[RMDB]
RNA sequence: GGGAACGACUCGAGUAGAGUCGAAAACGUCUUGUUUCGACAAGACGAAAAAAGAUAUGGAAGGGUCUGAGGCUAGCUUCCAUUUCGGAAACGAAAUGGUAAGCUUGGACCCUCAGAGCCCUUCCUAAGUCAAAAAAGCAGGGUUUCGACCCUGCAACAUUCCCGUUCGAUUCGUCGAACGGGAAUGAAAAGAAACAACAACAACAAC
Reactivity to 2A3 in 0.01 (KOAc 150mM, MgCl2 10mM, bicine 150mM(pH8.5), 24C), signal-to-noise 1, nucleotides 027 to 156: c000g000u000c000u030u040g000u020u090u160c210g100a050c010a010a000g000a000c000g020a030a000a000a000a020a000g080a000u110a020u070g000g000a020a000g000g000g000u000c000u020g000a000g010g000c030u020a000g020c000u000u000c000c010a000u000u010u000c000g000g020a040a090a050c000g000a000a010a000u020g010g070u300a000a020g010c000u000u030g000g000a020c000c020c000u020c000a000g010a040g000c000c000c000u000u000c000c000u000a000a000g000u000c000a060a030a020a000a150a000g000c020a030g050g000g000u080u110u220c160g130a110c000c020c000u000g000c000a000a000